Structure probing data (DMS and 2A3) for a 177-nucleotide construct. DMS adducts were read by reverse transcription with MarathonRT. As a SHAPE reagent, 2A3 marks flexible, mostly unpaired nucleotides at the ribose 2'-OH. The 2A3 profile rests on 3,132 reads.

RNA sequence: GGGAACGACUCGAGUAGAGUCGAAAAUCAAACGAGCUCUCUGUAAAAAUCACAAGAUUUUAUUGUGCAUGGUAGCAUGAGUCUGUAAUCCCAGCUACCAGCUACUCAGGUGGCUGAGGUAGUGGGAAAAAAUAAGACCGUUCGCGGUCUUAUUUUUAAAAGAAACAACAACAACAAC
Reactivity to DMS in 0.01 (KOAc 150mM, MgCl2 10mM, bicine 150mM(pH8.5), 24C), signal-to-noise 5, nucleotides 027 to 126: u040c090a080a100a110c060g000a080g010c020u000c010u000c050u000g000u000a000a060a100a120a030u000c010a040c100a070a060g010a100u030u020u040u040a080u010u010g010u010g010c090a030u000g000g000u010a160g020c020a040u020g000a060g010u020c030u000g000u020a070a170u000c000c000c010a090g020c000u000a010c000c000a030g000c000u010a000c000u010c240a140g020g030u000g010g010c000u000g010a080g020g010u000a000g030u000g000g000g010a000
Reactivity to 2A3 in 0.01 (KOAc 150mM, MgCl2 10mM, bicine 150mM(pH8.5), 24C), signal-to-noise 3, nucleotides 027 to 126: u100c030a040a030a020c040g040a030g020c000u010c000u000c000u030g020u060a160a090a010a000a000u030c030a060c030a070a040g020a080u020u100u100u160a140u090u100g010u010g060c100a010u010g030g040u080a010g000c020a020u050g010a010g060u020c040u080g090u160a050a080u040c000c000c010a010g030c000u010a000c010c010a000g000c000u000a000c000u040c090a050g160g070u010g020g000c010u040g050a050g090g040u000a000g000u000g020g010g000a060